[RMDB]
RNA sequence: GGGAACGACUCGAGUAGAGUCGAAAAUACAGUGUAGUGGGCGCUGAGGAUGGGAGGUGGCGUGGAUAUGACAUAUGCCCUUGGCAGGCAUAGCCCCUCUUGUUGCCGAGAGCAGGUGGCGUCCACCCGCAUGGCCGGCCGCUCCUUGCGGAGGAAAGCCAUUAAUUACCUUCGGGUAAUUAAUGGCAAAAGAAACAACAACAACAAC
Reactivity to 2A3 in 0.01 (KOAc 150mM, MgCl2 10mM, bicine 150mM(pH8.5), 24C), signal-to-noise 1, nucleotides 027 to 156: u040a000c030a040g050u010g040u100a000g000u000g010g010g010c030g000c040u070g000a160g240g000a050u130g030g000g010a040g000g040u140g010g000c040g020u100g080g110a070u050a130u200g070a010c050a060u050a020u070g010c000c020c050u030u050g030g000c040a000g000g030c000a000u010a030g000c000c000c060c000u000c020u010u050g220u110u090g060c020c010g090a100g010a020g090c070a000g060g040u100g010g010c000g010u000c020c000a000c040c000c000g040c020a030u000g060g000c060c050g040g040c050c040g040c000u000c050c010u000u230g010c040g040g110a000g030g060a120a000a000